Chemical mapping of a 207-nucleotide RNA with 2A3.
RNA sequence: GGGAACGACUCGAGUAGAGUCGAAAAACAAUGUUCGCAUUGUUAUUGGCGUACUACUAAUGGAUGGAAGACUACUGCUACCCACCCAUUCCCAAAUAGGAAUGGAGGCAGUACCACCCAUCAUGUUAGUAUCGCGUGAUAGCCCAUUCGUGGGCAAGUGGGCUGACUAAUUCGUUAGUCAGCCCACAAAAGAAACAACAACAACAAC
Reactivity to 2A3 in 0.01 (KOAc 150mM, MgCl2 10mM, bicine 150mM(pH8.5), 24C), signal-to-noise 1, nucleotides 027 to 156: a000c000a010a010u010g000u030u070c240g020c090a010u000u040g030u100u080a070u120u260g140g010c020g000u110a120c030u000a000c010u010a060a000u010g050g040a020u030g030g010a070a150g050a090c050u070a010c000u000g000c000u050a100c030c110c030a080c000c000c000a040u020u010c000c000c000a280a300a260u300a050g030g000a000a000u000g020g040a030g050g000c030a000g030u010a040c000c000a020c000c000c000a010u020c010a120u100g000u010u010a050g000u000a010u300c000g000c010g010u000g050a170u170a050g010c010c020c000a030u050u070c230g080u070g000g050g000c000a010a010
The RNA was probed in 150 mM KOAc, 10 mM MgCl2 and 150 mM bicine (pH 8.5) at 24 C.